RNA sequence: GGGAACGACUCGAGUAGAGUCGAAAACCAACCGCCUUCGGGCGGUUGGGAUGACAGUCGCGUGGAAAGUCCGGGCUGACUGUCCACGACAGAACCCGGCUUAAAUCUAUCGCUUCGGCGAUAGAAAAUAAAGGUAACAUUUCGAUGUUACCUUUAUAAAAGAAACAACAACAACAAC
Reactivity to DMS in 0.01 (KOAc 150mM, MgCl2 10mM, bicine 150mM(pH8.5), 24C), signal-to-noise 8, nucleotides 027 to 126: c000c000a000a000c000c000g030c000c000u000u010c210g040g020g040c000g010g000u000u000g000g000g000a050u000g010a090c070a040g010u000c030g010c110g010u000g010g010a100a070a060g010u010c010c040g010g000g020c080u010g010a020c000u000g000u000c010c060a070c080g000a070c080a080g010a120a140c010c010c000g000g000c070u000u000a050a130a130u000c000u000a000u000c000g010c000u000u010c200g030g010c000g000a010u000a000g000a010a030a090
Reactivity to 2A3 in 0.01 (KOAc 150mM, MgCl2 10mM, bicine 150mM(pH8.5), 24C), signal-to-noise 3, nucleotides 027 to 126: c000c010a000a000c010c000g030c010c020u070u070c250g140g000g010c010g000g010u000u000g010g000g000a050u110g030a000c020a030g030u020c010g070c130g160u050g060g040a200a170a050g060u020c030c020g030g160g000c150u100g020a020c000u010g010u000c000c020a070c060g110a030c020a040g080a030a040c000c000c020g020g020c050u070u110a100a120a080u020c000u010a000u010c000g000c000u060u040c200g090g000c000g000a010u010a010g000a010a000a000